Structure probing data (DMS and 2A3) for a 170-nucleotide construct. For DMS, 4,675 sequencing reads were counted. 2A3 adducts were read by reverse transcription with SuperScript II with manganese. It was measured as part of the RMDB library 15KLIB. The RNA was probed in 150 mM KOAc, 10 mM MgCl2 and 150 mM bicine (pH 8.5) at 24 C.
RNA sequence: GGGAACGACUCGAGUAGAGUCGAAAAUUCCAUCCAUGGGAUCGGUGCCGAGUGAGGCUUAUCCCGGGGGGAUUGCCUCGGCCCCCUCCCUAACACGGGAGUCUCGGGCCCCCUCCCAGGAAUGGAGCCAUCCGCGGCUUCGGCCGCGGAAAAAGAAACAACAACAACAAC
Reactivity to DMS in 0.01 (KOAc 150mM, MgCl2 10mM, bicine 150mM(pH8.5), 24C), signal-to-noise 2, nucleotides 027 to 129: u030u010c040c000a040u010c070c100a140u030g020g000g000a020u000c280g040g020u050g070c020c020g000a110g080u040g010a030g000g120c030u000u060a080u010c000c000c070g020g020g020g000g000g020a080u030u110g000c080c060u000c150g000g000c000c000c190c090c030u040c000c000c000u000a160a070c200a110c290g000g020g000a000g040u000c070u000c200g040g000g010c030c000c060c000c130u000c000c000c000a070g000g050a000a030u040g000g040a000g010c020c000a150
Reactivity to 2A3 in 0.01 (KOAc 150mM, MgCl2 10mM, bicine 150mM(pH8.5), 24C), signal-to-noise 2, nucleotides 027 to 129: u040u000c000c000a000u000c000c000a200u040g040g000g030a060u090c020g050g000u050g050c000c000g000a000g070u150g030a030g000g000c000u020u060a030u050c000c000c000g000g030g030g000g000g010a040u070u080g110c060c000u050c040g000g020c000c000c000c000c000u000c000c000c000u050a200a110c110a040c170g000g000g030a020g040u030c060u040c010g010g050g000c010c010c000c000c000u000c000c000c000a030g000g000a010a000u050g070g000a000g000c030c000a070